[RMDB]
RNA sequence: GGGAACGACUCGAGUAGAGUCGAAAACGACCCGGAGCGAGGAGUUGACCCGGAGCGAGGAGUUGACCCUGAGUGAGGAAGCGACCUGGAGUGAAGAGGCGACCCAGAGUGAGGAGGCGACCCAGGGUCGACCCUAUUAUUUCGAUAAUAGGGUCGAAAAAGAAACAACAACAACAAC
Reactivity to 2A3 in 0.01 (KOAc 150mM, MgCl2 10mM, bicine 150mM(pH8.5), 24C), signal-to-noise 8, nucleotides 027 to 126: c050g080a070c000c000c000g020g030a080g020c050g020a040g030g030a090g060u050u060g120a130c000c020c000g010g020a050g020c040g010a050g020g020a070g030u070u080g080a070c000c000c020u040g040a070g040u080g020a060g040g040a080a030g020c010g030a060c000c010u030g030g020a110g050u110g050a080a040g040a050g060g030c030g020a060c000c010c010a030g040a030g080u080g030a060g030g030a030g030g010c020g010a030c000c000c010a010g020g000g020
Reactivity to DMS in 0.01 (KOAc 150mM, MgCl2 10mM, bicine 150mM(pH8.5), 24C), signal-to-noise 9, nucleotides 027 to 126: c110g000a130c030c010c010g010g010a130g010c060g010a060g010g000a110g010u000u010g000a110c060c030c030g010g000a100g010c060g000a090g010g000a110g010u010u000g000a070c030c020c020u000g010a110g010u020g000a140g020g010a120a100g010c050g010a070c050c020u010g000g000a090g010u010g010a110a070g000a100g000g010c050g010a100c050c030c030a070g000a100g010u020g010a110g000g000a100g000g010c050g000a100c030c010c010a090g000g010g000
Structure probing data (2A3 and DMS) for a 177-nucleotide construct.
It was measured as part of the RMDB libraries RFM100 and RFMREP.
The RNA was probed in 150 mM KOAc, 10 mM MgCl2 and 150 mM bicine (pH 8.5) at 24 C.